[RMDB]
RNA sequence: GGGAACGACUCGAGUAGAGUCGAAAAGGGAUAAGGGAGUACUCUUAUCCCCACGUGGUUGGUGACAACCACGAUUAACGGGAGGUGACCCGCUCCCACCUCACUGAGUGCUCUCCACGCCUUCGGGCCUGGUUUGCACGCAGGUAACAGAGCUCAACUACUACCCCUACUUCGGUAGGGGUAGUAGAAAAGAAACAACAACAACAAC
Reactivity to 2A3 in 0.01 (KOAc 150mM, MgCl2 10mM, bicine 150mM(pH8.5), 24C), signal-to-noise 2, nucleotides 027 to 156: g000g020g000a020u030a000a020g010g040g010a110g220u260a300c000u000c000u000u000a000u000c000c000c000c010a010c000g000u000g000g010u000u000g000g020u100g070a030c000a010a010c000c000a000c000g000a020u170u160a020a080c100g010g010g000a010g010g020u090g120a050c020c000c030g040c000u000c000c020c000a040c000c030u110c010a060c060u000g000a000g010u000g020c000u000c000u000c000c020a000c000g000c000c000u080u180c290g000g000g020c000c000u000g000g010u000u000u010g040c020a010c000g000c020a000g000g020u030a100a080c060a150g030a030g000c030u060c080a020a090